[RMDB]
RNA sequence: GGGAACGACUCGAGUAGAGUCGAAAAUCUGAAAACAGGAUGGGAAAACGGCAGCUUGCGGGCUGCCGUUUGUUCGGGAAGUUAAGCCUUGUUUUCAGGCUGCUGCUCGGACUCUGUCGAAGCGGUGGCGUAAUCGACCAUUCGUGGUCGAUUACGCAAAAGAAACAACAACAACAAC
Reactivity to DMS in 0.01 (KOAc 150mM, MgCl2 10mM, bicine 150mM(pH8.5), 24C), signal-to-noise 1, nucleotides 027 to 126: u030c020u030g000a030a010a000a000c000a040g010g000a140u020g000g000g000a070a000a000a000c030g000g000c000a000g000c020u000u000g020c110g000g000g000c000u000g090c000c000g000u000u000u000g000u040u010c010g000g010g020a210a160g000u010u000a120a200g000c000c000u010u000g100u000u030u040u000c060a030g000g010c100u040g000c020u000g000c030u040c090g010g010a060c050u000c090u100g070u000c030g010a040a050g000c030g000g030u000g010
Reactivity to 2A3 in 0.01 (KOAc 150mM, MgCl2 10mM, bicine 150mM(pH8.5), 24C), signal-to-noise 1, nucleotides 027 to 126: u040c000u040g010a000a050a020a000c040a010g120g030a040u100g020g170g010a010a030a010a010c000g000g010c010a000g000c000u040u220g030c290g130g020g010c000u000g000c000c000g000u000u000u000g000u020u000c000g000g000g100a030a030g140u300u290a120a120g000c000c010u070u090g040u000u000u000u000c000a000g000g000c130u030g000c070u050g030c000u030c010g070g000a100c050u040c010u200g030u050c000g010a100a150g030c000g000g120u070g070